Conditions: 150 mM KOAc, 10 mM MgCl2 and 150 mM bicine (pH 8.5), 24 C.
This 207-nucleotide RNA was probed chemically with 2A3.
Values cover nucleotides 27 to 156.
RNA sequence: GGGAACGACUCGAGUAGAGUCGAAAAAGGGGCCUGGCUUCCCCCUGGGAGCUGCUGGCUUGGAAGCAGGAGGCAUUGCCCAGGUGAGAGUUCGGCAUGGACCCAGGGGAGUGGCACACGGUGCCCGCCGUCAGCUGUGCUCAGGAGCAGCAGGCAACUUUUAUGCGAUGUUCGCAUCGCAUAAAAGAAAAGAAACAACAACAACAAC
Reactivity to 2A3 in 0.01 (KOAc 150mM, MgCl2 10mM, bicine 150mM(pH8.5), 24C), signal-to-noise 1, nucleotides 027 to 156: a010g010g000g050g020c000c000u000g010g030c000u050u000c020c010c000c000c000u000g000g000g000a070g140c040u060g000c010u030g030g030c040u020u010g050g030a070a040g020c070a070g020g160a140g090g010c180a260u060u250g000c010c000c000a030g000g150u100g040a260g010a050g050u190u300c010g000g030c020a050u120g050g050a090c010c020c010a000g020g000g000g010a080g000u030g020g050c010a040c010a030c200g000g060u090g200c000c000c030g000c010c000g000u090c030a060g000c010u030g000u040g020c050u090c110a100g020g150a090g020c020a000g030c000a000g040g010c000a000a070
It was measured as part of the RMDB library OK3TST.